[RMDB]
RNA sequence: GGGAACGACUCGAGUAGAGUCGAAAAUAGGGCUAGUGGAAGACUUAAGAUGGCGGCGUUUGCACGGAGUGCAAUCACUGCGUCCUUACGGGGGUUGCAAGGCGUCCGAAGUAUGAGUCCACUAACACCUACACCCCUGGUUCGCCAGGGGUGUAGGAAAAGAAACAACAACAACAAC
Reactivity to DMS in 0.01 (KOAc 150mM, MgCl2 10mM, bicine 150mM(pH8.5), 24C), signal-to-noise 1, nucleotides 027 to 126: u000a030g030g000g100c020u000a020g000u000g000g000a100a060g000a140c070u000u030a020a200g000a070u040g030g070c020g000g040c050g000u030u050u000g000c000a010c010g060g030a120g000u000g030c000a000a030u020c000a010c030u000g000c000g000u000c000c000u000u030a080c020g040g000g000g000g000u030u010g000c280a100a090g040g000c000g030u000c000c000g010a030a030g000u010a080u030g000a110g000u010c000c000a020c000u030a000a030c040a180
Reactivity to 2A3 in 0.01 (KOAc 150mM, MgCl2 10mM, bicine 150mM(pH8.5), 24C), signal-to-noise 3, nucleotides 027 to 126: u260a030g000g030g020c030u000a000g000u000g030g010a030a040g060a050c020u060u050a110a030g030a170u160g160g000c020g000g000c010g030u000u030u030g020c010a030c100g160g120a190g060u010g020c020a030a020u060c040a000c130u000g040c010g040u060c000c010u020u030a070c080g010g010g020g000g030u030u090g000c030a030a040g080g000c050g220u050c020c020g010a020a020g020u020a060u200g100a020g030u000c000c000a000c000u020a050a050c010a030